[RMDB]
The data come from the RNA Mapping Database (RMDB), library RFM100. This 177-nucleotide RNA was probed chemically with DMS and 2A3. The 2A3 profile rests on 3,594 reads. Reactivities are given for positions 27 through 126. For 2A3 the reverse transcriptase was SuperScript II with manganese. The DMS profile rests on 1,579 reads.
RNA sequence: GGGAACGACUCGAGUAGAGUCGAAAAUUGCCGUACUGACGCCCGAAUCCUGAUUCCUUGCGAAUCCGUGUUCGGGGCCCCGAUUGGCUUCGGCCCGUCGGAGGGGUGGCCCACCACCUCGAAACCCGUUUACUGGGCGAUUCGUCGCCCAGUAAACAAAAGAAACAACAACAACAAC
Reactivity to DMS in 0.01 (KOAc 150mM, MgCl2 10mM, bicine 150mM(pH8.5), 24C), signal-to-noise 1, nucleotides 027 to 126: u020u040g000c040c000g000u050a050c120u040g000a180c070g000c010c000c050g040a060a000u000c160c000u000g020a000u030u000c000c030u080u020g000c190g000a020a010u020c010c130g000u000g060u000u000c000g040g000g020g010c060c070c000c020g000a060u000u020g010g000c010u000u030c180g000g010c010c000c040g040u000c010g000g000a170g000g000g000g000u000g010g020c110c020c170a170c070c030a010c020c000u000c000g010a060a090a170c120c000c020
Reactivity to 2A3 in 0.01 (KOAc 150mM, MgCl2 10mM, bicine 150mM(pH8.5), 24C), signal-to-noise 4, nucleotides 027 to 126: u120u110g080c020c020g010u110a110c060u070g060a040c040g120c020c000c000g000a010a010u050c010c000u010g000a010u010u020c000c070u170u300g040c120g060a000a000u000c000c010g020u010g000u010u000c000g000g000g010g000c040c000c000c000g010a010u010u020g000g000c000u030u050c170g090g010c000c000c000g020u000c000g010g040a090g020g000g000g000u020g020g000c020c010c010a190c000c010a010c000c000u000c000g020a060a060a060c010c030c070